[RMDB]
Structure probing data (2A3) for a 177-nucleotide construct. The reactions ran in a buffer of 150 mM KOAc, 10 mM MgCl2 and 150 mM bicine (pH 8.5), at 24 C. The data come from the RNA Mapping Database (RMDB), library RFM100.

RNA sequence: GGGAACGACUCGAGUAGAGUCGAAAACACGCGACUGCCGCAUCCCGCACGGGAGGCGCAGCUGCUGCAUGACGCUUUAACGUCGCAGCUCACCACCGCCUGACCAUUCUGCCAGGAGAUAACGGUUGUACCCAUCGCGUUUCGACGCGAUGGGUACAAAAGAAACAACAACAACAAC
Reactivity to 2A3 in 0.01 (KOAc 150mM, MgCl2 10mM, bicine 150mM(pH8.5), 24C), signal-to-noise 1, nucleotides 027 to 126: c090a000c000g070c070g090a020c000u110g030c140c110g000c030a080u020c000c000c000g070c050a120c070g010g000g000a010g000g020c000g000c000a000g000c000u060g000c000u020g000c000a140u080g000a000c000g060c070u020u300u260a060a020c010g000u000c000g050c060a030g010c000u000c000a070c000c000a000c000c000g000c000c000u020g030a030c000c000a020u120u080c040u050g050c000c010a000g080g000a050g000a000u100a020a020c030g110g000u000u050